Description:
Structure probing data (2A3) for a 207-nucleotide construct. It was measured as part of the RMDB library OK3TST. Conditions: 150 mM KOAc, 10 mM MgCl2 and 150 mM bicine (pH 8.5), 24 C. For 2A3, 405 sequencing reads were counted.
RNA sequence: GGGAACGACUCGAGUAGAGUCGAAAAGGCUAACCUGCCGGUAGGGACUGCAAUGUUUGAGGUUUUGAAUGUAGAUGUUAUUCCGUCAAUUGGUUUUAUGGAAAGGAUAGUGUUUUCAAAUAUUCUUUUUGAUUGCAGGAGUACCACAGCUGUAGUGACAACUAUCGCAGUUCGCUGCGAUAGUUGUAAAAGAAACAACAACAACAAC
Reactivity to 2A3 in 0.01 (KOAc 150mM, MgCl2 10mM, bicine 150mM(pH8.5), 24C), signal-to-noise 1, nucleotides 027 to 156: g050g000c000u020a110a010c000c020u010g000c050c040g000g000u000a020g000g050g080a020c000u020g040c040a070a000u130g270u180u050u050g100a130g000g000u040u010u060u150g100a060a100u130g030u150a020g000a090u020g040u070u000a050u080u020c040c000g010u070c070a090a120u040u040g170g110u060u040u170u160a090u090g060g040a020a020a020g030g000a010u010a070g120u040g050u000u000u000u000c010a020a020a020u080a050u110u130c000u040u050u070u070u050g050a020u000u010g020c010a020g000g040a060g120u120a050c020c020a060c000a050g050c090u000g010u110a020g000u080g110